[RMDB]
RNA sequence: GGGAACGACUCGAGUAGAGUCGAAAAGACCUCUCAUGAGAAACUGCUCAUCGCCUACAAAAACAAAACAGGCGAGUUCGCGGUCUAUAGCGUGUGGCAACCCGGAGACCAUAAUAACUACUCAGUCACCGUCUUCGAGGGUGCGGAGUCUAAGAAACGUUCACUUUUUCUUCGGAAAAAGUGAACGAAAAGAAACAACAACAACAAC
Reactivity to 2A3 in 0.01 (KOAc 150mM, MgCl2 10mM, bicine 150mM(pH8.5), 24C), signal-to-noise 1, nucleotides 027 to 156: g040a070c000c000u010c010u010c020a120u140g000a020g000a140a120a020c050u030g000c020u010c040a100u010c060g000c040c040u090a070c120a070a210a100a070a010c110a040a200a040a040c080a010g000g000c010g010a020g000u040u070c040g010c000g020g060u000c000u040a130u110a040g040c060g000u030g010u120g140g000c010a010a090c000c000c030g030g000a000g040a000c010c130a060u150a300a000u100a170a000c020u120a030c020u000c030a000g180u090c040a020c070c010g070u020c010u000u030c020g100a110g020g010g020u000g020c000g050g020a030g030u040c030u120a100a060g170a080a160a010
Structure probing data (2A3) for a 207-nucleotide construct. 2A3 adducts were read by reverse transcription with SuperScript II with manganese. It was measured as part of the RMDB library OK3TST.